[RMDB]
RNA sequence: GGGAACGACUCGAGUAGAGUCGAAAAGGUUAACUUCGGUUAACCAACUCGCGUGCUACGGCACGCGAGAAGCUAUCGUUCGCGAUAGCAGCUCGUUACGUGAGUAACGAGCAAGGCACACGUUCGCGUGUGCCACUAGUAAUCGUGAGAUUACUAGAAGACCAUCGCUACGGCGAUGGUCAAUUUAAACUGGUGGGGCAGUGUCUAGGAUUGACGUUAGACACUGCUUUUUGCCCGUUUCAAACAGGUGAAUACAAACCGUCAUUAAGGACCUGUUCGCAGGUCCUAAAAGAAACAACAACAACAAC
Reactivity to DMS in 0.01 (KOAc 150mM, MgCl2 10mM, bicine 150mM(pH8.5), 24C), signal-to-noise 1, nucleotides 027 to 266: g000g010u010u000a000a030c020u000u030c140g000g040u000u020a010a000c000c000a140a130c010u000c010g040c000g050u000g010c000u000a120c190g040g020c100a000c000g010c010g010a000g000a050a070g020c000u000a000u000c010g010u000u040c270g020c020g000a020u000a010g020c000a090g010c000u000c010g020u010u010a000c000g000u040g000a240g000u000a000a010c010g000a040g000c020a020a060g030g030c010a010c000a000c000g030u000u010c150g020c050g030u000g010u000g040c020c020a030c000u000a000g000u010a000a000u000c010g010u010g010a150g010a020u010u000a000c010u010a010g000a220a120g010a020c010c010a000u020c010g020c000u000a120c170g030g020c020g020a010u010g000g000u000c000a000a000u030u010u020a070a090a050c110u020g000g000u000g010g000g010g010c000a000g000u000g010u000c050u000a020g000g010a240u040u000g000a060c120g030u020u010a000g000a020c000a010c000u000g010c000u010u000u000u010u000g020c010c000c060g000u010u030u020c240a050a070a010c120a130g010g000u000g000a050a060u040a260c150a080a100a070c140c000g030u040c010a060u030u050a100
Reactivity to 2A3 in 0.01 (KOAc 150mM, MgCl2 10mM, bicine 150mM(pH8.5), 24C), signal-to-noise 2, nucleotides 027 to 266: g000g000u020u020a000a000c000u030u090c180g010g010u000u000a000a000c000c000a000a010c000u000c000g000c000g010u000g000c000u010a040c190g150g000c000a000c000g000c000g000a000g010a000a000g000c000u030a000u000c000g030u090u030c300g020c030g070a000u000a000g000c020a000g010c000u010c000g000u000u010a000c000g050u070g170a220g000u000a000a000c010g010a000g000c000a000a070g000g000c000a000c000a000c000g010u030u090c290g070c030g060u030g000u010g000c000c000a010c010u000a000g020u000a010a000u010c020g030u020g120a130g000a000u010u010a010c000u000a010g030a040a020g000a000c000c010a000u010c000g000c000u020a000c260g080g000c010g020a010u000g000g000u000c000a000a000u000u000u030a020a020a000c000u000g030g010u030g020g010g020g000c000a060g000u010g000u000c000u010a020g010g090a180u100u170g040a020c030g030u030u010a000g000a000c000a000c000u000g070c120u000u010u000u020u030g020c030c000c010g050u010u050u100c170a090a110a080c020a020g070g030u100g130a150a030u300a110c050a050a110a030c050c010g100u080c030a060u100u140a060
Source information:
Structure probing data (DMS and 2A3) for a 307-nucleotide construct. The RNA was probed in 150 mM KOAc, 10 mM MgCl2 and 150 mM bicine (pH 8.5) at 24 C. It was measured as part of the RMDB library POS240. For 2A3, 1,808 sequencing reads were counted.